An RNA of 177 nucleotides, treated with DMS and 2A3 and read out base by base. The data come from the RNA Mapping Database (RMDB), library OK1LIB. For 2A3 the reverse transcriptase was SuperScript II with manganese. The DMS profile rests on 62,784 reads. For 2A3, 17,248 sequencing reads were counted.

RNA sequence: GGGAACGACUCGAGUAGAGUCGAAAAUUUGAUCCUGGCUCAGGACGAACGCUGGCGGAGUGCUUAACGCAUGCAUGUCGAGCCGUAAGGCCAUUCAGCGUACACGAGCGGCGGACGGGUGAGUAACAAUAUUUUAAAAUUUCGAUUUUAAAGUAUUAAAAGAAACAACAACAACAAC
Reactivity to DMS in 0.01 (KOAc 150mM, MgCl2 10mM, bicine 150mM(pH8.5), 24C), signal-to-noise 9, nucleotides 027 to 126: u020u040u030g010a100u010c000c000u010g010g010c020u000c020a060g010g010a200c030g000a060a100c020g010c000u000g010g030c020g000g010a280g000u000g010c180u020u030a100a050c070g000c010a050u010g000c120a060u010g000u030c180g010a180g020c010c010g000u060a080a120g010g010c000c020a050u000u010c020a020g010c000g010u000a110c040a040c050g000a220g000c010g000g010c010g000g010a130c030g000g000g010u000g000a050g010u010a080a080c100
Reactivity to 2A3 in 0.01 (KOAc 150mM, MgCl2 10mM, bicine 150mM(pH8.5), 24C), signal-to-noise 7, nucleotides 027 to 126: u080u030u140g040a020u020c000c000u010g030g000c000u000c010a010g100g120a040c010g000a030a020c010g000c010u060g200g000c020g030g190a050g010u030g010c040u050u090a030a000c020g010c010a120u020g000c010a010u030g030u110c140g050a020g000c000c000g010u040a040a070g010g000c000c000a000u030u030c000a000g010c000g010u020a010c020a000c010g030a040g000c010g000g010c000g020g000a030c000g010g030g040u040g010a020g020u040a060a020c020